RNA sequence: GGGAACGACUCGAGUAGAGUCGAAAAGGUGAUCGCCGUCGACGGCUAUGUCGGCGCGCCUGCCCACCGGAUAGCCGACCAGUCGGUGGUGGUCACCAUGACCGAUGCUGAAGAGCUGACGGCGGUGGCAGACUGUGGUUUUCGAACCACAGUCUGCAAAAGAAACAACAACAACAAC
Reactivity to 2A3 in 0.01 (KOAc 150mM, MgCl2 10mM, bicine 150mM(pH8.5), 24C), signal-to-noise 2, nucleotides 027 to 126: g000g000u000g000a030u000c020g000c040c000g020u000c000g020a030c070g010g050c060u070a020u150g270u110c040g010g030c030g020c010g040c010c010u020g040c000c000c000a000c000c000g000g010a030u060a040g020c040c010g010a050c120c000a010g010u000c040g000g010u000g010g000u000g010g000u020c000a020c000c000a000u000g020a000c030c000g020a040u080g010c010u090g050a130a090g010a010g110c020u020g040a090c040g050g000c010g000g060u040g120